Structure probing data (DMS and 2A3) for a 207-nucleotide construct.
Values cover nucleotides 27 to 156.
Values are in units of 0.01, from 0 to 300, in steps of 10.
Conditions: 150 mM KOAc, 10 mM MgCl2 and 150 mM bicine (pH 8.5), 24 C.
RNA sequence: GGGAACGACUCGAGUAGAGUCGAAAAGUUCGAACGUGUUCACACUCACGAUCGAGUUCGUGUGAUCUCACACGAGUACUCGAGAGUUCGUGUUCGUACUCUCUCGAUCUCGUUCGUUCGAGUACGAGUGUGAGUGUUCGAACACACGAGAUCGUACCCAGAGUGUGUGAUUCGUCACACACUCUGGAAAAGAAACAACAACAACAAC
Reactivity to DMS in 0.01 (KOAc 150mM, MgCl2 10mM, bicine 150mM(pH8.5), 24C), signal-to-noise 1, nucleotides 027 to 156: g020u020u010c000g000a060a080c020g000u000g020u010u000c030a030c020a090c000u000c000a090c020g020a160u000c030g000a190g000u000u030c040g040u010g010u000g000a160u000c210u000c010a030c020a010c000g000a250g000u000a000c000u010c020g000a040g000a160g020u010u010c030g050u000g000u000u010c020g000u000a040c040u020c030u000c020u010c010g010a020u010c040u000c070g040u040u000c050g020u030u010c020g000a040g030u000a010c000g000a140g030u000g010u000g000a040g010u000g050u000u000c090g000a070a040c020a020c040a020c000g000a160g000a020u000c030g010u040a150c100
Reactivity to 2A3 in 0.01 (KOAc 150mM, MgCl2 10mM, bicine 150mM(pH8.5), 24C), signal-to-noise 5, nucleotides 027 to 156: g020u020u010c010g010a030a030c050g040u060g120u130u060c010a010c000a010c030u030c020a050c050g050a100u060c030g000a020g040u030u020c020g010u000g000u000g090a300u100c140u090c130a000c000a010c000g000a010g040u050a030c000u000c000g010a010g000a030g010u050u030c060g010u060g040u070u060c010g000u060a050c030u030c010u010c010u000c080g010a040u010c020u010c090g080u070u010c030g020u010u030c020g000a010g020u010a010c010g000a030g010u050g000u010g010a000g010u010g030u020u030c030g010a010a000c000a000c000a000c020g040a020g000a070u040c020g030u090a080c010